Structure probing data (2A3 and DMS) for a 207-nucleotide construct. Conditions: 150 mM KOAc, 10 mM MgCl2 and 150 mM bicine (pH 8.5), 24 C. For 2A3 the reverse transcriptase was SuperScript II with manganese. For DMS the reverse transcriptase was MarathonRT.
[RMDB]
RNA sequence: GGGAACGACUCGAGUAGAGUCGAAAAAUCGAAUGCAAGCGGCGGGGCGUGUCGACACCCAGCCCUGUAAUCCGCGGCGGGUUCGGCGAGGGCGGUCGAGUGAGUAUACGUACAUGAACGGCCCCGAAGCCCCUCGCUCGGCGAGGGGAUCGGCGCCAUUUAUAUUAUGCUUCGGCAUAAUAUAAAUAAAAGAAACAACAACAACAAC
Reactivity to 2A3 in 0.01 (KOAc 150mM, MgCl2 10mM, bicine 150mM(pH8.5), 24C), signal-to-noise 1, nucleotides 027 to 156: a000u080c020g040a090a060u130g060c080a080a070g000c020g090g020c060g000g010g010g030c040g020u080g000u030c030g040a010c010a030c150c000c030a010g000c020c000c000u020g010u090a130a090u070c070c070g020c050g000g010c040g010g000g000u050u040c010g020g050c000g010a070g000g010g010c060g060g020u070c020g000a000g050u020g020a010g060u020a070u000a090c150g080u000a020c030a120u110g070a160a020c030g000g000c040c000c030c030g000a070a020g040c000c040c030c000u000c000g030c090u230c110g130g000c010g000a000g000g000g000g000a000u020c000g000g010c010g010c020c000
Reactivity to DMS in 0.01 (KOAc 150mM, MgCl2 10mM, bicine 150mM(pH8.5), 24C), signal-to-noise 1, nucleotides 027 to 156: a090u000c010g000a060a060u020g000c040a040a120g020c050g010g010c060g000g040g010g020c020g010u000g030u020c060g000a170c110a030c020c010c000a160g020c020c000c060u020g020u000a060a150u000c030c040g060c090g030g010c050g010g040g030u000u000c020g010g000c040g030a130g000g020g010c060g000g000u010c020g000a090g000u010g000a110g020u000a130u010a050c060g000u010a050c050a130u020g000a090a080c070g010g000c000c060c010c000g000a030a090g010c000c000c030c010u000c000g050c020u010c100g050g040c010g040a040g030g040g010g000a020u000c010g010g000c070g010c030c010